[RMDB]
RNA sequence: GGGAACGACUCGAGUAGAGUCGAAAAGCAGGUUGCGGACAUCCUCUUCCGCACGCAGACGGUCGAUGUUGCGACUGAGCAUCCAGAACAUCGUUAGAGGGACGCCCAGCAGCUCUAAUGGCGACAAUACUUUUAUCGUGUUCGCACGAUAAAAGUAAAAAGAAACAACAACAACAAC
Reactivity to 2A3 in 0.01 (KOAc 150mM, MgCl2 10mM, bicine 150mM(pH8.5), 24C), signal-to-noise 2, nucleotides 027 to 126: g000c030a020g070g090u150u050g030c000g000g000a010c010a100u060c020c020u000c050u050u000c020c000g030c010a010c050g030c010a030g040a150c070g020g050u060c010g030a020u060g070u140u100g110c060g030a020c010u020g050a040g010c010a020u020c000c010a040g060a110a050c010a060u100c030g040u080u040a020g000a010g050g030g000a020c040g070c030c030c010a020g010c000a010g010c010u000c040u110a080a060u120g050g010c040g020a030c030a030a080
Reactivity to DMS in 0.01 (KOAc 150mM, MgCl2 10mM, bicine 150mM(pH8.5), 24C), signal-to-noise 4, nucleotides 027 to 126: g040c100a210g010g010u010u000g010c020g000g000a060c100a070u000c030c060u010c050u000u000c020c010g000c020a060c120g010c100a100g000a120c100g000g000u000c050g000a080u010g010u010u000g000c030g010a080c030u000g010a090g020c040a110u010c030c030a140g000a100a080c090a050u000c040g020u010u010a030g000a040g000g010g010a150c070g000c030c020c010a110g020c080a110g000c020u000c040u000a070a040u000g010g000c050g020a040c160a070a130
Conditions: 150 mM KOAc, 10 mM MgCl2 and 150 mM bicine (pH 8.5), 24 C. This 177-nucleotide RNA was probed chemically with 2A3 and DMS. For DMS, 3,727 sequencing reads were counted. The data come from the RNA Mapping Database (RMDB), library OK2TST. DMS adducts were read by reverse transcription with MarathonRT.